[RMDB]
RNA sequence: GGGAACGACUCGAGUAGAGUCGAAAAUUCCUCUUCGGAGGAAAUAGAUCCUAAGUCGACAUGAGGCGUUAGACAUGAUGUGUAAUCGGAAACGAUUACCAUCAACAGCUAACGCUCCCCACCAUGUCGAUAUGGAGAUAACCCGUUUCGACGGGAACAAACUACAACGGUUCGCCGUUGUAGUUUGAAAAGAAACAACAACAACAAC
Reactivity to 2A3 in 0.01 (KOAc 150mM, MgCl2 10mM, bicine 150mM(pH8.5), 24C), signal-to-noise 5, nucleotides 027 to 156: u020u000c010c010u000c000u040u050c260g130g010a010g010g080a010a040a020u160a030g130a060u020c010c000u040a140a070g030u010c000g010a000c000a010u020g010a020g010g000c010g010u000u010a010g020a080c060a120u050g010a000u010g300u050g000u040a000a000u000c010g000g040a110a050a020c010g000a000u000u010a000c000c000a000u000c000a000a030c070a000g030c000u010a000a000c000g010c000u030c010c000c000c000a020c000c000a000u010g000u000c000g000a000u010a040u020g020g000a070g020a040u110a080a070c000c000c010g000u050u090u090c260g100a040c020g020g010g010a020a020
Reactivity to DMS in 0.01 (KOAc 150mM, MgCl2 10mM, bicine 150mM(pH8.5), 24C), signal-to-noise 3, nucleotides 027 to 156: u000u000c000c000u000c010u000u000c300g040g020a000g050g010a020a030a110u000a140g010a160u000c000c010u000a090a270g000u010c000g000a020c010a040u000g010a300g040g020c020g000u000u000a000g010a030c040a300u000g000a010u020g010u020g040u000a030a020u000c000g000g010a170a110a300c010g000a040u000u000a010c000c010a010u000c010a020a060c070a170g040c000u020a010a010c010g000c020u000c210c120c010c000a300c190c020a020u000g000u020c030g000a020u000a120u000g000g030a070g010a190u010a090a070c010c010c000g000u000u010u010c200g000a040c030g030g010g000a120a180